[RMDB]
RNA sequence: GGGAACGACUCGAGUAGAGUCGAAAAGGGUGAUGUCUCCUAACCUUUAUCAAUGGGGGCACUCGGUCGUGCUGUGGGUAGAAAUUUUAUUUCGUGCCUACCUUAGACGCUUCUCGUCGGGAGUAUGUGGGACUGAUGAACUUCGGUUCAUCAGUAAGGAUGUGAAUUGAUUCGUCAAUUCACAUCCAAAAGAAACAACAACAACAAC
Reactivity to DMS in 0.01 (KOAc 150mM, MgCl2 10mM, bicine 150mM(pH8.5), 24C), signal-to-noise 3, nucleotides 027 to 156: g000g010g010u000g020a060u000g020u000c020u000c000c020u000a100a100c060c050u000u000u000a090u030c090a110a110u000g010g070g020g030g020c010a080c040u000c050g000g010u010c070g030u000g030c040u000g010u000g010g030g030u000a300g010a030a030a040u010u020u010u000a080u010u030u000c020g000u000g020c010c010u010a010c020c090u000u000a100g010a110c060g000c080u000u010c070u000c060g020u010c070g000g020g010a110g000u000a050u000g000u000g020g010g010a080c010u000g010a030u000g000a020a010c020u000u000c300g050g000u010u000c010a000u000c010a020g000u000a050a110
Reactivity to 2A3 in 0.01 (KOAc 150mM, MgCl2 10mM, bicine 150mM(pH8.5), 24C), signal-to-noise 6, nucleotides 027 to 156: g060g000g010u050g030a110u040g020u020c020u020c020c000u030a070a080c010c020u080u160u150a220u180c110a090a110u170g000g000g000g000g000c000a010c020u020c030g040g010u040c030g020u040g060c080u080g000u050g020g030g000u020a040g100a030a030a020u210u260u150u150a110u030u130u050c080g050u120g010c000c000u020a020c000c000u050u050a040g020a050c040g020c040u110u040c070u040c060g090u030c010g010g040g010a050g050u100a080u150g070u120g020g030g030a000c000u000g000a000u000g000a000a010c000u040u050c150g080g000u000u000c000a000u000c000a000g000u000a000a030
Chemical mapping of a 207-nucleotide RNA with DMS and 2A3. The RNA was probed in 150 mM KOAc, 10 mM MgCl2 and 150 mM bicine (pH 8.5) at 24 C. The 2A3 profile rests on 4,303 reads. Values are in units of 0.01, from 0 to 300, in steps of 10. In probing experiments dimethyl sulfate is read out at A N1 and C N3, which are open when not base-paired. DMS adducts were read by reverse transcription with MarathonRT.